[RMDB]
RNA sequence: GGGAACGACUCGAGUAGAGUCGAAAAAUCAGCUCUGACCUCCAGUGGUCCAAAGAAGGCCUAUAUUACGUGGCCAUGGUUGGAAUACCUUCGCAAGGCGAUCACAUGUAAUGUGCCCGCUGUUUGUACUAUCAGGUCACUUCGGUGACCUGAUAGUAAAAGAAACAACAACAACAAC
Reactivity to 2A3 in 0.01 (KOAc 150mM, MgCl2 10mM, bicine 150mM(pH8.5), 24C), signal-to-noise 2, nucleotides 027 to 126: a000u000c000a000g020c000u010c000u040g100a110c000c000u010c010c000a060g010u050g040g040u000c030c100a100a000a080g150a150a000g110g000c000c070u220a180u000a040u210u280a130c150g060u110g000g000c020c040a030u000g050g000u090u000g000g020a080a060u090a160c010c000u070u210c000g050c170a170a050g010g000c000g040a090u070c040a010c000a000u030g120u260a180a070u030g020u070g020c000c060c010g000c000u000g040u060u120u040g020u020

Structure probing data (2A3) for a 177-nucleotide construct. Source: RMDB library OK1LIB, as collected in RNAgym. For 2A3 the reverse transcriptase was SuperScript II with manganese. The 2A3 profile rests on 587 reads.